An RNA of 177 nucleotides, treated with 2A3 and DMS and read out base by base. 2A3 adducts were read by reverse transcription with SuperScript II with manganese.

RNA sequence: GGGAACGACUCGAGUAGAGUCGAAAAAGAAGAUGGGCAUCAGCGUGAUGACCUGGUUUAUAGUCUUGACUUCGAAGACUUCAAUUCACAACACUCGUUAACAAAUCAGAAACUUGUCUUUGAAGAACAAGGCAGAUACGUUCGCGUAUCUGCCUUGAAAAGAAACAACAACAACAAC
Reactivity to 2A3 in 0.01 (KOAc 150mM, MgCl2 10mM, bicine 150mM(pH8.5), 24C), signal-to-noise 1, nucleotides 027 to 126: a000g080a040a030g060a100u080g000g030g000c000a010u000c000a000g300c030g180u080g000a030u020g120a200c030c010u030g000g000u060u130u040a170u100a040g050u010c010u000u030g060a080c010u000u000c010g010a000a000g000a000c000u060u000c060a050a120u010u020c020a020c000a040a020c000a040c080u150c050g040u040u070a130a050c100a060a180a130u170c110a090g050a010a040a010c050u050u060g000u000c000u010u080u000g010a000a000g000a070a050
Reactivity to DMS in 0.01 (KOAc 150mM, MgCl2 10mM, bicine 150mM(pH8.5), 24C), signal-to-noise 2, nucleotides 027 to 126: a030g030a080a070g000a050u000g000g010g000c060a000u000c040a170g020c220g020u010g040a040u000g010a070c060c000u000g050g010u000u010u000a110u000a110g020u000c020u000u000g020a200c020u000u010c070g000a010a030g000a020c000u020u000c090a070a040u000u000c080a130c240a030a000c040a120c220u000c150g010u010u000a060a120c210a110a090a100u010c220a080g000a050a110a040c090u000u000g020u000c030u000u010u000g000a000a020g010a090a230
Reactivities are given for positions 27 through 126.